[RMDB]
RNA sequence: GGGAACGACUCGAGUAGAGUCGAAAAGGAUCAAUAGGGACCUGAUCUAAGGGCAAGUAACAGAAUAGGAAGGACAGGCCAAUUCAGUGCCAGCAAUCGAAGUACUAAAGAGGGUCCGCACUACCUAAAAUUUAAAUAUAUUCGUAUAUUUAAAUUUAAAAGAAACAACAACAACAAC
Reactivity to DMS in 0.01 (KOAc 150mM, MgCl2 10mM, bicine 150mM(pH8.5), 24C), signal-to-noise 2, nucleotides 027 to 126: g000g010a080u020c050a070a140u030a080g000g000g000a060c030c040u000g010a060u000c000u000a110a100g010g000g010c120a060a140g010u040a080a060c100a100g000a050a060u000a070g000g000a090a030g000g020a090c240a090g010g020c010c020a060a050u010u040c000a070g010u000g000c010c060a090g000c120a070a080u040c070g000a070a110g010u010a060c050u030a090a060a050g030a180g000g000g000u010c030c030g010c090a030c050u000a060c030c020u000a030
Reactivity to 2A3 in 0.01 (KOAc 150mM, MgCl2 10mM, bicine 150mM(pH8.5), 24C), signal-to-noise 1, nucleotides 027 to 126: g040g000a070u110c040a010a110u120a230g000g000g020a070c000c010u030g020a040u000c010u070a030a110g050g020g000c060a040a070g030u030a100a000c020a060g120a110a010u070a060g050g020a060a050g040g020a030c050a010g090g000c070c000a050a020u070u080c000a010g010u020g100c010c000a000g080c060a040a170u150c050g020a130a000g020u070a040c050u030a010a080a080g050a020g000g060g010u000c000c000g010c040a050c060u150a060c000c000u080a070